An RNA of 207 nucleotides, treated with 2A3 and read out base by base.
RNA sequence: GGGAACGACUCGAGUAGAGUCGAAAAACUAAUCCAAAGCAAGUAUAGGAGAACAGGUUUUUAACUAUUUUUAGGCAGAUAAAAAAUAGUAUUUGACAGUCUAACACUAACUGAAUAAUAAGUGUUAAAAAGUCGUCUCUGUUCGCAGAGACGACAACCAACACAAAAGCUUCGGCUUUUGUGUUGGAAAAGAAACAACAACAACAAC
Reactivity to 2A3 in 0.01 (KOAc 150mM, MgCl2 10mM, bicine 150mM(pH8.5), 24C), signal-to-noise 1, nucleotides 027 to 156: a000c040u050a080a010u010c010c000a040a000a020g000c010a020a000g020u030a030u080a090g020g020a030g010a120a060c120a170g120g010u020u030u020u000u010a050a000c010u010a020u000u000u010u000u040a020g060g030c070a040g040a220u180a030a010a000a000a030a030u040a010g000u010a040u030u010u010g030a010c010a000g000u000c010u010a010a010c000a000c000u000a020a000c000u000g030a050a030u040a080a000u010a010a020g000u010g000u000u010a010a080a000a030a010g000u000c010g000u000c010u000c010u050g070u060u030c200g000c100a000g000a000g000a010c000g010a000c000a000a010